Chemical mapping of a 177-nucleotide RNA with DMS. It was measured as part of the RMDB library 15KREP.
RNA sequence: GGGAACGACUCGAGUAGAGUCGAAAAAGACCGAAGCGAGGAGGAAAGCAAAGAAAGCAACGGGGCUAGCCGUCAGGUGUUCCUCCCCCCGAGAGGGGAAGAGUGAGGCUUAUCCCGGGGAACUCGGCAAGUGGGAAAUGUUCGCAUUUCCCACUUGAAAAGAAACAACAACAACAAC
Reactivity to DMS in 0.01 (KOAc 150mM, MgCl2 10mM, bicine 150mM(pH8.5), 24C), signal-to-noise 1, nucleotides 027 to 126: a100g000a230c010c000g010a200a080g000c050g020a070g010g000a080g000g000a080a090a020g000c040a110a120a120g010a060a140a070g000c080a110a080c050g000g010g020g020c050u000a060g010c050c000g020u020c060a060g010g000u000g000u000u020c020c000u000c010c030c010c000c010c020g010a200g020a240g030g000g010g000a050a090g010a050g000u000g000a240g000g000c050u020u000a150u010c010c000c000g030g000g000g020a140a070c030u020c080g000g050